[RMDB]
RNA sequence: GGGAACGACUCGAGUAGAGUCGAAAAAGGAUGGAAAAAUUCACUGUGGCAGGCACCAUGCAGAACUGCUCAAACCACGGUGCUCAGCAUGUGACGAGGUAAAAAAAAGUUCAUCCUUUCACACUGGGAAAAAUAAGCUUAGAUUAAGCCAAUAUUAACGGAUAUCGCUAUUCGUAGCGAUAUCCGUAAAAGAAACAACAACAACAAC
Reactivity to 2A3 in 0.01 (KOAc 150mM, MgCl2 10mM, bicine 150mM(pH8.5), 24C), signal-to-noise 2, nucleotides 027 to 156: a000g040g000a030u060g000g030a110a100a000a000a030u120u110c120a030c000u000g010u030g040g030c050a050g050g010c020a000c000c000a050u120g030c000a020g000a170a050c040u050g010c000u010c060a050a070a030c070c000a060c010g000g000u040g000c020u000c010a000g000c000a070u110g020u020g030a020c030g080a010g160g030u190a010a020a020a000a000a060a000a000g300u300u300c030a040u300c010c000u000u000u070c020a020c000a020c020u090g000g080g000a000a000a300a000a000u050a130a000g030c030u040u020a020g010a300u260u160a010a000g000c030c010a000a130u020a070u120u100a030
Conditions: 150 mM KOAc, 10 mM MgCl2 and 150 mM bicine (pH 8.5), 24 C. An RNA of 207 nucleotides, treated with 2A3 and read out base by base. For 2A3, 674 sequencing reads were counted. Values cover nucleotides 27 to 156.